[RMDB]
RNA sequence: GGGAACGACUCGAGUAGAGUCGAAAAGGCUGUUGAAAUACACUCCUGUGCCGGCAAUACAGUGUGUAUGGAGGUCUCAAUGGCUCGGAAGUGCCAGCAAACCGGCGUAGAUAUUAGCAGACGUAUGAUAGGAUGCAUCCGUUCGCGGAUGCAUCAAGCUCUAUAUACAGUUCGCUGUAUAUAGAGCAAAAGAAACAACAACAACAAC
Reactivity to DMS in 0.01 (KOAc 150mM, MgCl2 10mM, bicine 150mM(pH8.5), 24C), signal-to-noise 2, nucleotides 027 to 156: g000g020c030u010g050u000u010g060a130a130a080u000a030c020a060c000u000c300c020u000g000u000g040c010c000g000g020c020a070a050u000a090c050a080g000u000g000u000g000u000a020u000g000g010a120g030g030u000c040u000c050a050a060u000g010g010c000u000c020g000g000a150a150g030u000g030c010c030a100g000c090a090a100a130c000c000g000g040c010g000u010a110g010a140u000a100u000u000a070g000c040a130g000a070c050g010u000a050u000g000a220u000a120g000g000a040u000g020c010a010u000c000c010g070u000u010c300g050c090g000g010a010u000g020c000a000u000c000a040a130
Reactivity to 2A3 in 0.01 (KOAc 150mM, MgCl2 10mM, bicine 150mM(pH8.5), 24C), signal-to-noise 4, nucleotides 027 to 156: g010g000c030u020g040u300u030g050a020a030a000u030a010c010a000c000u170c080c040u010g000u040g000c020c020g040g000c050a050a060u150a180c020a020g020u010g000u000g010u050a010u010g000g010a000g000g000u000c010u010c040a030a130u030g010g010c020u020c060g040g070a120a050g040u050g040c010c000a030g020c040a070a050a020c010c000g030g000c010g020u050a050g060a160u080a080u170u190a070g070c060a010g030a090c070g100u150a070u160g100a090u100a090g150g000a000u000g000c000a000u000c000c010g000u020u040c170g000c000g070g000a000u010g000c000a000u000c000a000a000